[RMDB]
RNA sequence: GGGAACGACUCGAGUAGAGUCGAAAAGACGCCUGAUGGCGAACGUGCGCAAGAUAAGAAUGGUGGUAUAUACUGCCUAGAAUAACUAAUGGACGGCAGAGCGCACGAACCACCACGGUCCACCAGACAGUAUAGGGCGAUUCGUCGCCCUAUACUGAAAAGAAACAACAACAACAAC
Reactivity to 2A3 in 0.01 (KOAc 150mM, MgCl2 10mM, bicine 150mM(pH8.5), 24C), signal-to-noise 5, nucleotides 027 to 126: g070a020c010g010c000c040u280g160a140u300g030g000c000g010a080a020c010g020u010g000c010g000c010a030a120g040a300u120a120a050g020a090a020u020g020g010u000g000g040u040a080u010a020u020a190c000u000g000c000c000u030a030g110a090a140u110a100a030c110u140a140a090u140g080g020a010c040g010g000c000a000g020a030g020c000g000c000a000c000g010a020a000c030c000a020c030c010a040c030g000g040u020c010c000a010c020c000a000g040a030
Reactivity to DMS in 0.01 (KOAc 150mM, MgCl2 10mM, bicine 150mM(pH8.5), 24C), signal-to-noise 4, nucleotides 027 to 126: g000a210c020g020c000c000u010g000a090u040g010g030c000g020a120a140c000g000u010g000c030g040c010a150a080g010a170u040a040a120g010a080a110u000g000g000u000g000g010u020a080u040a140u000a140c000u000g000c020c000u000a180g010a090a100u050a110a160c220u070a100a100u030g010g020a110c200g000g000c000a000g000a130g000c030g000c000a010c000g010a080a090c080c030a100c050c080a130c110g040g000u020c000c010a060c050c010a130g000a270

About this RNA: The record gives the reactivity of an RNA of 177 nucleotides to 2A3 and DMS. In probing experiments dimethyl sulfate is read out at A N1 and C N3, which are open when not base-paired. 2A3 adducts were read by reverse transcription with SuperScript II with manganese. For 2A3, 5,091 sequencing reads were counted. It was measured as part of the RMDB library OK1LIB.